[RMDB]
RNA sequence: GGGAACGACUCGAGUAGAGUCGAAAAGUUGAUGAUGUAUGCCGCUGAUCCAGCCAUGCACAUUGCCUCCUCUAACGCUUUUCUUGAUUUGAGGACAUCAUGUUUUAGUGUCGCUGCACUUACAACUAGUACAGUGACUGUUCGCAGUCACUGUACUAAAAGAAACAACAACAACAAC
Reactivity to DMS in 0.01 (KOAc 150mM, MgCl2 10mM, bicine 150mM(pH8.5), 24C), signal-to-noise 1, nucleotides 027 to 126: g020u010u000g030a020u000g010a150u010g020u000a050u000g000c110c240g040c040u010g000a160u020c200c050a060g010c040c030a010u030g000c090a040c020a060u000u000g000c060c090u010c020c010u010c090u010a090a090c100g000c100u000u010u000u000c060u030u020g000a100u000u000u000g020a100g000g000a050c120a040u000c020a090u000g000u000u010u010u000a040g050u000g010u000c090g000c050u000g010c030a040c070u010u010a100c120a020a080c140u000
Reactivity to 2A3 in 0.01 (KOAc 150mM, MgCl2 10mM, bicine 150mM(pH8.5), 24C), signal-to-noise 1, nucleotides 027 to 126: g090u110u070g000a020u000g000a040u010g040u010a010u070g090c070c050g000c040u020g060a170u190c100c000a000g030c000c010a010u010g020c020a000c000a030u010u150g040c000c030u000c010c000u000c050u070a070a020c020g000c040u080u050u030u070c040u070u090g210a210u050u020u170g010a000g000g000a000c010a070u030c010a030u080g080u070u090u010u050a040g000u070g010u010c020g020c190u100g000c010a000c000u080u110a050c010a060a010c070u010
Source information: This 177-nucleotide RNA was probed chemically with DMS and 2A3. Source: RMDB library 15KREP, as collected in RNAgym. The reactions ran in a buffer of 150 mM KOAc, 10 mM MgCl2 and 150 mM bicine (pH 8.5), at 24 C. Values cover nucleotides 27 to 126.